[RMDB]
RNA sequence: GGGAACGACUCGAGUAGAGUCGAAAAGAUGGCUUCACUUUCAAGCUGGGAAUCAAAAAACUUUAAGUGCUAGAAUAUUCAUGUCAAGAGGAUCUUCCAAGAAUAAGCCAGGAAUGCAAUUAGGGGCUGACUCAUGGAUGACAAUGGUCGAUGAGUAGGUAUAGUACCUAUUCGUAGGUACUAUACCAAAAGAAACAACAACAACAAC
Reactivity to 2A3 in 0.01 (KOAc 150mM, MgCl2 10mM, bicine 150mM(pH8.5), 24C), signal-to-noise 8, nucleotides 027 to 156: g060a040u060g010g010c010u040u040c060a040c080u080u170u120c090a060a030g010c030u050g010g000g050a020a070u110c120a040a060a090a070a040a020c080u170u190u150a140a020g020u030g040c030u040a020g050a120a030u100a070u140u110c060a050u100g080u080c030a050a020g010a040g090g040a050u010c030u080u010c050c010a030a010g020a040a110u120a070a000g010c020c000a010g020g060a090a030u120g010c050a020a060u090u050a130g020g000g020g000c030u030g010a010c010u010c060a030u050g060g030a050u030g010a020c030a090a090u070g070g010u030c020g040a030u030g000a010g060u080a050
Reactivity to DMS in 0.01 (KOAc 150mM, MgCl2 10mM, bicine 150mM(pH8.5), 24C), signal-to-noise 4, nucleotides 027 to 156: g010a120u000g020g000c030u000u000c020a070c070u000u010u000c060a040a080g030c020u000g020g030g020a110a110u010c040a010a060a070a070a110a070c050u010u000u000a070a090g040u000g020c030u000a100g010a100a100u010a080u000u010c050a060u000g030u000c060a050a080g010a120g030g010a070u000c020u000u000c020c020a050a110g010a050a090u010a040a080g020c020c010a080g060g010a070a100u010g020c070a040a120u000u000a080g010g010g020g000c020u000g000a070c040u000c020a090u000g000g010a050u010g010a060c050a050a060u010g020g010u000c030g010a070u000g010a040g020u000a080
Conditions: 150 mM KOAc, 10 mM MgCl2 and 150 mM bicine (pH 8.5), 24 C. The record gives the reactivity of an RNA of 207 nucleotides to 2A3 and DMS. DMS adducts were read by reverse transcription with MarathonRT. Values cover nucleotides 27 to 156.